[RMDB]
This 177-nucleotide RNA was probed chemically with DMS and 2A3. For DMS the reverse transcriptase was MarathonRT. 2A3 adducts were read by reverse transcription with SuperScript II with manganese. It was measured as part of the RMDB library OK1LIB. For 2A3, 1,656 sequencing reads were counted. The reactions ran in a buffer of 150 mM KOAc, 10 mM MgCl2 and 150 mM bicine (pH 8.5), at 24 C.
RNA sequence: GGGAACGACUCGAGUAGAGUCGAAAAGACGCCUGUGUGGCGAAACGAGCAAUGGGAUAAGCCGCAAUAGAAGAUGAGAUGGAAGCGGCAAGAUAGAAUGCUCGCAACGAGAUCCAUCUCACAGAGAGGUAUAUGCUGGGUUCGCCCAGCAUAUACCAAAAGAAACAACAACAACAAC
Reactivity to DMS in 0.01 (KOAc 150mM, MgCl2 10mM, bicine 150mM(pH8.5), 24C), signal-to-noise 2, nucleotides 027 to 126: g000a200c000g000c000c030u030g000u040g090u030g040g060c000g040a010a030a150c090g010a060g050c010a020a100u000g020g030g030a130u020a090a230g010c030c010g030c000a280a060u070a220g000a190a080g040a080u010g000a000g060a020u000g000g000a060a080g090c030g050g000c000a030a000g000a300u030a050g030a170a110u060g100c000u000c000g000c140a050a220c000g060a050g030a250u000c000c000a020u010c000u060c000a060c060a200g000a060g020a260
Reactivity to 2A3 in 0.01 (KOAc 150mM, MgCl2 10mM, bicine 150mM(pH8.5), 24C), signal-to-noise 2, nucleotides 027 to 126: g050a010c010g030c000c000u160g020u060g070u170g230g000c020g000a010a100a000c010g000a010g010c000a090a300u300g030g160g050a090u090a170a000g020c000c000g070c000a000a110u070a270g200a260a000g130a230u040g000a000g000a000u000g000g000a000a120g000c000g000g000c000a000a000g030a000u140a050g120a090a020u050g010c010u020c030g000c000a130a080c170g000a020g000a090u010c000c000a000u010c000u000c000a000c000a010g090a000g010a070